[RMDB]
Notes
This 177-nucleotide RNA was probed chemically with 2A3 and DMS. 2A3 is a SHAPE reagent: it acylates the 2'-hydroxyl of flexible nucleotides of all four kinds. The reactions ran in a buffer of 150 mM KOAc, 10 mM MgCl2 and 150 mM bicine (pH 8.5), at 24 C. DMS (dimethyl sulfate) methylates the pairing face of unpaired adenines and cytosines.
RNA sequence: GGGAACGACUCGAGUAGAGUCGAAAAAGUGUUCGCAAAAAGAUGGCUUGAAUUCUUCACAGAGUGCGAGAGGCGAUGAGGGGGUACAGAAUACACAAAUCAAGGCGAACAAUUAGCGUAGAGUAGAUAGCUUCAAUACCUUCGGGUAUUGAAGCUAAAAAGAAACAACAACAACAAC
Reactivity to 2A3 in 0.01 (KOAc 150mM, MgCl2 10mM, bicine 150mM(pH8.5), 24C), signal-to-noise 2, nucleotides 027 to 126: a030g050u010g010u000u020c020g000c040a080a080a000a040a000g050a090u120g020g040c040u040u030g060a090a060u110u020c010u050u000c040a040c010a060g150a010g050u110g020c040g000a180g000a020g080g030c050g000a020u010g040a130g050g000g000g000g000u000a040c030a010g050a030a020u110a050c050a010c060a020a210a010u170c080a050a000g060g020c000g020a010a000c000a040a130u160u050a040g030c050g010u010a010g000a010g060u070a030g030a090
Reactivity to DMS in 0.01 (KOAc 150mM, MgCl2 10mM, bicine 150mM(pH8.5), 24C), signal-to-noise 2, nucleotides 027 to 126: a120g000u040g000u000u010c060g020c050a060a070a180a090a040g030a150u000g000g030c070u090u020g000a060a050u000u010c020u000u000c090a070c050a140g000a020g000u030g000c040g000a080g010a050g010g030c040g020a060u050g000a120g020g000g020g010g000u000a000c090a040g000a100a080u020a070c110a010c060a050a030a100u000c050a040a060g000g000c010g000a020a060c030a050a080u020u050a090g010c110g010u000a140g000a100g000u000a050g000a180